[RMDB]
RNA sequence: GGGAACGACUCGAGUAGAGUCGAAAAGAUAUGGAAACCUCUAUGCAAGCGCCUAUUCGGAAACGAAUAGAAGCGUGAUGACCAUAGAGGGUUUCCUAAGUCAAACGGGCCAGUUCGCUGGCCCGAAGUACCUAUAUUCCUUCGGGAAUAUAGGUACAAAAGAAACAACAACAACAAC
Reactivity to 2A3 in 0.01 (KOAc 150mM, MgCl2 10mM, bicine 150mM(pH8.5), 24C), signal-to-noise 3, nucleotides 027 to 126: g000a000u030a000u050g000g020a020a000a000c000c010u010c000u010a010u020g080c170a250a300g000c020g000c010c000u010a000u000u000c000g000g010a010a020a020c010g010a010a000u010a030g060a080a110g000c000g000u020g050a090u290g100a080c100c020a000u000a000g000a050g020g010g000u000u010u000c000c000u000a040a000g030u000c030a040a080a120c040g000g010g000c000c000a020g030u130u180c280g120c180u000g030g000c030c000c000g010a000a000
Reactivity to DMS in 0.01 (KOAc 150mM, MgCl2 10mM, bicine 150mM(pH8.5), 24C), signal-to-noise 3, nucleotides 027 to 126: g010a020u000a270u020g000g000a020a040a040c000c000u000c010u010a000u000g010c060a140a170g010c000g020c010c000u000a000u000u010c020g030g000a080a060a110c000g020a020a000u000a000g000a110a110g030c000g000u000g010a060u000g020a160c300c010a000u000a010g000a020g010g030g000u000u000u010c000c010u000a010a060g000u000c020a090a150a260c020g000g000g020c000c000a010g020u010u020c240g000c010u000g020g000c010c000c030g000a000a060
Structure probing data (2A3 and DMS) for a 177-nucleotide construct. The DMS profile rests on 3,076 reads. Reactivities are given for positions 27 through 126.